[RMDB]
RNA sequence: GGGAACGACUCGAGUAGAGUCGAAAAGAUAUGGACCGAUGGCUAGCGAAUGGAUCGGAAACGAUCCAAAAUCGCUUGGACCCAUACGGUCCUAAGUCAAACACGCUCUUGUUCGCAAGAGCGUGAAUCGAAUCUGGUUGUUCGCAACCAGAUUCGAAAAAGAAACAACAACAACAAC
Reactivity to DMS in 0.01 (KOAc 150mM, MgCl2 10mM, bicine 150mM(pH8.5), 24C), signal-to-noise 1, nucleotides 027 to 126: g010a040u000a020u020g000g000a030c000c040g000a000u000g000g000c000u000a020g010c010g030a020a120u010g000g000a010u000c010g030g000a000a020a010c010g010a110u010c010c030a000a030a200a230u010c010g010c030u010u000g000g040a020c300c000c010a000u000a080c020g010g010u000c000c000u020a000a060g000u010c000a100a030a240c000a010c010g000c000u010c000u000u000g010u030u010c230g060c010a000a000g020a000g000c000g000u010g010a020a030
The data come from the RNA Mapping Database (RMDB), library TTRDES. Chemical mapping of a 177-nucleotide RNA with DMS.